[RMDB]
About this RNA: Conditions: 150 mM KOAc, 10 mM MgCl2 and 150 mM bicine (pH 8.5), 24 C. Chemical mapping of a 207-nucleotide RNA with 2A3.

RNA sequence: GGGAACGACUCGAGUAGAGUCGAAAAACAACAGAUAGCUGGAACCAGCGUAGAAUUCUACGCAUAUCCAUAGCGAAUGGUACCUGUAAAGAAAAUAAUGAGAGAUGUACAAGUACCAACAGCUUUCAAUGCCAUGGUGAUGUCAAUCACAUAUGCACGACGGUACGGUAUUCGUACCGUACCGUCGAAAAGAAACAACAACAACAAC
Reactivity to 2A3 in 0.01 (KOAc 150mM, MgCl2 10mM, bicine 150mM(pH8.5), 24C), signal-to-noise 3, nucleotides 027 to 156: a000c040a000a010c020a090g090a090u150a020g040c060u040g000g010a040a090c080c090a060g000c000g000u010a000g030a130a290u300u130c000u000a000c000g000c010a030u110a020u090c010c010a080u070a060g070c040g040a020a100u020g000g000u020a000c000c000u030g010u030a000a040a040g180a060a080a060a070u210a040a120u230g080a050g010a000g000a090u060g020u050a000c000a000a000g010u000a030c000c000a000a020c060a000g010c020u010u060u030c050a050a030u090g010c050c000a020u080g010g070u020g000a010u020g120u210c090a070a070u010c000a000c010a000u140a040u120g010c050a070
Description
The 2A3 profile rests on 1,175 reads.